An RNA of 177 nucleotides, treated with 2A3 and read out base by base.
RNA sequence: GGGAACGACUCGAGUAGAGUCGAAAAGGAUGCUAAAGUCAUUUAAUGCUGACCUCCACUGGGUGGAUUAAGGUCAAGGUAUGAAGUCCUAUUCGCUCCUGAUAGGAACGACUUCAUAUUGCUUAUAGGGCUGACAUUACUUCGGUAAUGUCAGCCCAAAAGAAACAACAACAACAAC
Reactivity to 2A3 in 0.01 (KOAc 150mM, MgCl2 10mM, bicine 150mM(pH8.5), 24C), signal-to-noise 1, nucleotides 027 to 126: g000g050a000u110g000c050u140a210a050a060g210u050c000a100u060u060u150a150a070u140g010c000u000g010a010c000c000u020c000c000a000c050u280g160g190g000u030g000g060a030u120u120a000a050g000g000u000c000a000a000g020g000u000a000u020g000a000a000g060u000c000c000u000a000u020u020c100g050c050u060c000c000u000g000a000u020a000g000g030a000a060c100g150a000c000u000u000c000a000u010a000u010u150g030c000u220u020a030u110a050

2A3 adducts were read by reverse transcription with SuperScript II with manganese.